[RMDB]
RNA sequence: GGGAACGACUCGAGUAGAGUCGAAAAGUGAUAUUUUUGACACUCCUAGCGUACUUCAAGCUACUCUUUCUGAGUUUUCACACUUAGCUACCUUUGCUGAGUUGGAAGCUGCGCAGAAAGCCUAUCAGACGAUACACGUUCGCGUGUAUCAAAAGAAACAACAACAACAAC
Reactivity to 2A3 in 0.01 (KOAc 150mM, MgCl2 10mM, bicine 150mM(pH8.5), 24C), signal-to-noise 9, nucleotides 027 to 129: g060u050g060a080u060a180u140u130u060u080u150g060a040c010a000c020u020c000c020u020a020g010c010g030u050a080c040u100u140c070a110a030g020c020u050a060c030u020c000u050u030u000c010u010g010a000g010u000u000u010u010c040a080c000a010c050u030u000a000g000c010u110a170c060c100u210u190u140g000c000u000g000a000g000u000u000g000g000a000a000g000c010u040g050c100g000c050a010g020a010a010a000g000c010c010u150a220u110c030a040g050a130c100
Reactivity to DMS in 0.01 (KOAc 150mM, MgCl2 10mM, bicine 150mM(pH8.5), 24C), signal-to-noise 9, nucleotides 027 to 129: g000u020g040a100u030a080u010u020u010u010u040g030a090c080a010c020u050c010c010u020a000g050c080g040u000a070c040u000u010c070a020a020g030c070u000a070c120u010c000u010u020u020c000u040g030a050g000u010u000u000u010c040a040c150a030c000u010u010a000g030c000u020a070c210c180u020u080u040g000c000u000g010a000g000u000u000g010g010a000a000g010c030u020g010c120g030c070a030g000a010a010a000g000c200c050u040a090u020c090a050g040a300c120